This 170-nucleotide RNA was probed chemically with 2A3 and DMS. It was measured as part of the RMDB library 15KLIB. 2A3 is a SHAPE reagent: it acylates the 2'-hydroxyl of flexible nucleotides of all four kinds. DMS adducts were read by reverse transcription with MarathonRT. The reactions ran in a buffer of 150 mM KOAc, 10 mM MgCl2 and 150 mM bicine (pH 8.5), at 24 C.
RNA sequence: GGGAACGACUCGAGUAGAGUCGAAAACCAGGAAGGUACAACAGCUUUUCUAUACAGAGGACAUGGCCUCAAGAUUUGCUGAUGGGCUCUGCUUAUUUUGGAACUGUAAUGUACCAAAAUAUCCUAACGCGUGCAGGCUUCGGCCUGCACAAAAGAAACAACAACAACAAC
Reactivity to 2A3 in 0.01 (KOAc 150mM, MgCl2 10mM, bicine 150mM(pH8.5), 24C), signal-to-noise 3, nucleotides 027 to 129: c000c000a000g000g000a060a040g000g030u050a050c000a040a000c000a020g000c000u000u040u040u000c010u000a040u020a080c030a040g030a010g020g040a020c000a100u090g030g000c030c000u050c050a040a040g050a110u180u130u110g020c030u110g030a040u040g040g050g030c020u000c000u010g000c010u070u000a040u040u120u030u140g000g030a020a010c000u030g030u070a090a070u130g030u000a020c000c020a050a030a000a020u040a010u020c000c040u010a040a000c000g010c010
Reactivity to DMS in 0.01 (KOAc 150mM, MgCl2 10mM, bicine 150mM(pH8.5), 24C), signal-to-noise 3, nucleotides 027 to 129: c030c000a030g070g000a000a000g010g010u000a010c030a040a070c030a090g040c070u030u000u000u020c010u030a110u010a060c080a020g010a040g000g000a150c090a040u030g030g040c000c080u030c000a160a090g080a060u020u030u020g040c000u020g000a070u000g000g010g030c020u010c170u010g020c120u020u030a070u000u010u100u050g050g030a080a000c030u030g010u060a090a060u030g030u000a010c000c000a000a020a000a150u080a050u010c020c020u050a090a150c150g030c130